RNA sequence: GGGAACGACUCGAGUAGAGUCGAAAAAGCACUGGUACGAUACGUCGUACCAGUGCAAUCGUUGGGAUGGAACGCAAUUAAAUACAUGUGUGACGUGUAUUUGCGAACGACGUAAUUAUUUUUCAAAAUCACGCUAUCGUGUUCGCACGAUAGCGAAUCCUAGUUAAGUGUUCGCACUUAACUAGGAAAAAGAAACAACAACAACAAC
Reactivity to DMS in 0.01 (KOAc 150mM, MgCl2 10mM, bicine 150mM(pH8.5), 24C), signal-to-noise 3, nucleotides 027 to 156: a180g040c010a020c010u010g020g020u000a010c000g040a050u000a100c270g040u000c000g030u000a010c000c000a010g010u000g020c000a000a010u000c050g000u000u010g000g010g030a180u000g000g010a070a090c020g000c030a110a270u000u010a080a030a010u000a030c020a000u010g000u000g030u010g020a140c070g070u000g010u000a010u000u010u000g030c120g010a060a160c020g010a120c020g000u000a040a050u000u000a130u010u010u000u000u000c010a020a000a170a150u010c070a090c020g050c000u000a000u000c010g030u000g030u000u000c300g000c020a050c000g000a000u000a000g040c000g020a020a010
Reactivity to 2A3 in 0.01 (KOAc 150mM, MgCl2 10mM, bicine 150mM(pH8.5), 24C), signal-to-noise 2, nucleotides 027 to 156: a000g000c000a000c000u000g000g000u000a010c010g000a010u020a030c210g110u020c000g010u050a000c000c000a000g000u000g000c000a000a040u000c020g010u010u040g080g000g080a080u100g070g020a120a060c010g040c010a020a060u140u200a100a070a010u050a000c010a010u040g080u010g240u230g160a100c040g000u000g000u000a000u000u030u020g020c020g000a030a040c030g030a020c010g030u030a060a040u150u070a180u090u160u040u060u130c080a070a020a000a080u090c050a060c110g000c000u000a000u000c000g000u020g040u030u000c040g010c110a010c000g000a010u000a000g000c000g000a000a000